[RMDB]
RNA sequence: GGGAACGACUCGAGUAGAGUCGAAAAGCGAUGGACAAUGAUUGUUCAGCCACACACACACAGACACAGAGUUGUCCAUCGUAGGUGAACAAAAGUGACUGAGUGAGUGUGAAACAAGUACGACAAGGGGUAUUACUAACUUCGGUUAGUAAUACCCAAAAGAAACAACAACAACAAC
Reactivity to 2A3 in 0.01 (KOAc 150mM, MgCl2 10mM, bicine 150mM(pH8.5), 24C), signal-to-noise 4, nucleotides 027 to 126: g010c000g010a010u000g010g000a000c020a020a030u120g080a220u110u090g080u080u060c090a050g040c050c010a020c000a010c020a010c000a000c020a010c000a020g040a040c020a000c000a070g070a040g190u020u050g000u020c000c000a000u010c010g010u020a020g000g120u170g070a040a010c030a080a020a030a040g020u020g020a070c030u030g020a000g120u060g000a040g010u030g020u000g060a040a060a000c060a100a000g110u250a080c080g010a040c100a050a070g000
Reactivity to DMS in 0.01 (KOAc 150mM, MgCl2 10mM, bicine 150mM(pH8.5), 24C), signal-to-noise 4, nucleotides 027 to 126: g000c020g000a040u000g030g000a040c020a200a090u020g000a190u000u020g010u020u000c070a170g020c120c000a020c020a040c020a080c060a040c020a100c020a010g010a120c040a000c030a090g000a300g000u000u010g010u000c010c000a000u000c030g030u020a070g010g060u080g000a060a040c130a060a050a080a050g010u000g010a100c000u010g000a100g000u000g000a070g010u010g020u000g000a160a110a030c160a060a050g010u010a070c090g030a050c290a090a060g000
Structure probing data (2A3 and DMS) for a 177-nucleotide construct.
Values are in units of 0.01, from 0 to 300, in steps of 10.
For 2A3 the reverse transcriptase was SuperScript II with manganese.
For DMS, 5,063 sequencing reads were counted.
DMS adducts were read by reverse transcription with MarathonRT.